[RMDB]
RNA sequence: GGGAACGACUCGAGUAGAGUCGAAAAGAUAUGGAUGAUGACCAUGACCCGAGCACAUAUCGGAAACGAUAUGGCUCGCAUGCAAGUCCUAAGUCGGUAUAUCAGCCGGAUUCGUCCGGCUGAUAAAGACUGGACAGUUGUUCGCAACUGUCCAGUCAAAAGAAACAACAACAACAAC
Reactivity to DMS in 0.01 (KOAc 150mM, MgCl2 10mM, bicine 150mM(pH8.5), 24C), signal-to-noise 1, nucleotides 027 to 126: g020a060u030a260u000g000g030a020u000g000a110u040g000a110c300c010a000u010g000a130c130c160c040g010a020g010c000a060c000a000u000a000u000c000g000g020a110a070a010c010g010a010u000a000u000g000g000c000u000c000g000c020a020u000g010c050a090a150g000u000c000c010u010a050a150g000u000c000g000g010u010a090u000a030u000c000a010g010c000c000g050g010a000u000u000c150g030u020c000c000g000g000c000u000g000a000u000a000a100a170
Source information:
The record gives the reactivity of an RNA of 177 nucleotides to DMS. Values cover nucleotides 27 to 126.